Conditions: 150 mM KOAc, 10 mM MgCl2 and 150 mM bicine (pH 8.5), 24 C. The record gives the reactivity of an RNA of 207 nucleotides to 2A3. Values cover nucleotides 27 to 156. 2A3 adducts were read by reverse transcription with SuperScript II with manganese. The data come from the RNA Mapping Database (RMDB), library M2RFOK.
[RMDB]
RNA sequence: GGGAACGACUCGAGUAGAGUCGAAAAAUCAGAGGGCGCUAUCAUGCAAACUAGGAUUCUCUGCUCAUGCACAGAACCAACUACCGAUAACUAACAGUGCAUGAAGGUUAGUUAUUCCAUAUUAAUUAAAACUCGUAAUUCUUCGGAAUUACGAGAAGUAUGUGAUACGCUUCGGCGUAUCACAUACAAAAGAAACAACAACAACAAC
Reactivity to 2A3 in 0.01 (KOAc 150mM, MgCl2 10mM, bicine 150mM(pH8.5), 24C), signal-to-noise 4, nucleotides 027 to 156: a000u060c020a030g000a040g040g020g010c040g000c050u120a150u300c100a100u300g010c040a040a040a030c030u040a020g000g040a040u100u030c010u000c010u030g020c000u000c000a000u030g030c000a000c000a000g060a180a130c040c030a080a090c050u180a140c010c090g030a010u000a010a010c000u000a010a010c010a030g000u010g000c000a000u020g010a020a010g030g000u000u000a000g000u000u010a040u070u040c030c000a080u090a070u270u220a210a110u140u150a050a090a060a090c000u000c000g000u000a000a000u000u000c000u020u030c130g080g020a000a010u010u000a000c000g000a000g000a000a000